An RNA of 177 nucleotides, treated with DMS and read out base by base. The RNA was probed in 150 mM KOAc, 10 mM MgCl2 and 150 mM bicine (pH 8.5) at 24 C.
RNA sequence: GGGAACGACUCGAGUAGAGUCGAAAAGAUAUGGACGGGACAAGGGAGAAGGUACUCAUCUUACUAUGUCGGAAACGACAUAGUAAGAUGAGUAUGACCUUCUUUGAUCUUGGACCGUCCUAAGUCACAAUGCGCAUUUGUUCGCAAAUGCGCAUUGAAAAGAAACAACAACAACAAC
Reactivity to DMS in 0.01 (KOAc 150mM, MgCl2 10mM, bicine 150mM(pH8.5), 24C), signal-to-noise 1, nucleotides 027 to 126: g010a030u000a300u000g000g000a030c010g020g020g000a100c000a010a010g040g000g010a020g000a030a000g010g040u000a030c000u000c010a010u000c010u010u000a000c000u000a000u000g010u000c020g010g000a110a130a300c000g010a010c000a000u000a000g010u000a010a000g030a010u000g010a030g000u010a010u010g020a060c010c000u000u000c000u000u000u020g010a040u010c000u020u010g000g010a050c000c000g010u000c000c000u000a000a070g010u010c020a260